RNA sequence: GGGAACGACUCGAGUAGAGUCGAAAAGAUAUGGAAGCUUGGAUGGGAACUACACCCGUGGUCGGAAACGACCACGUGGUGCCCAUCUUUCGAAGCUUCCUAAGUCAAACCGCGGUUCGCCGCGGAAGUUUAGCAGUAACUUCGGUUACUGCUAAACAAAAGAAACAACAACAACAAC
Reactivity to DMS in 0.01 (KOAc 150mM, MgCl2 10mM, bicine 150mM(pH8.5), 24C), signal-to-noise 3, nucleotides 027 to 126: g030a040u010a300u000g010g020a010a000g010c010u000u000g010g010a010u000g010g000g000a180a020c060u010a300c030a010c000c010c010g020u000g000g000u000c000g020g010a090a150a300c000g000a000c000c010a010c010g010u030g060g020u000g000c000c010c000a010u000c000u000u010u010c270g000a070a040g020c000u010u020c000c000u000a010a090g000u000c030a140a220a250c000c000g030c000g000g000u010u000c300g000c010c010g010c010g010g000a010a030
Reactivity to 2A3 in 0.01 (KOAc 150mM, MgCl2 10mM, bicine 150mM(pH8.5), 24C), signal-to-noise 2, nucleotides 027 to 126: g000a020u090a000u180g000g000a010a020g000c040u090u080g060g020a010u010g000g050g000a090a100c130u220a020c300a000c030c010c000g000u010g020g020u010c000g050g010a110a110a130c030g000a000c000c000a000c010g010u120g000g010u000g040c000c000c000a000u010c000u000u000u050c050g070a030a010g000c000u000u000c000c000u000a090a010g000u010c000a030a100a090c000c000g000c010g010g000u110u140c300g070c100c010g000c000g000g000a000a010
Structure probing data (DMS and 2A3) for a 177-nucleotide construct. The reactions ran in a buffer of 150 mM KOAc, 10 mM MgCl2 and 150 mM bicine (pH 8.5), at 24 C. The 2A3 profile rests on 3,606 reads. For 2A3 the reverse transcriptase was SuperScript II with manganese. Source: RMDB library TTRDES, as collected in RNAgym.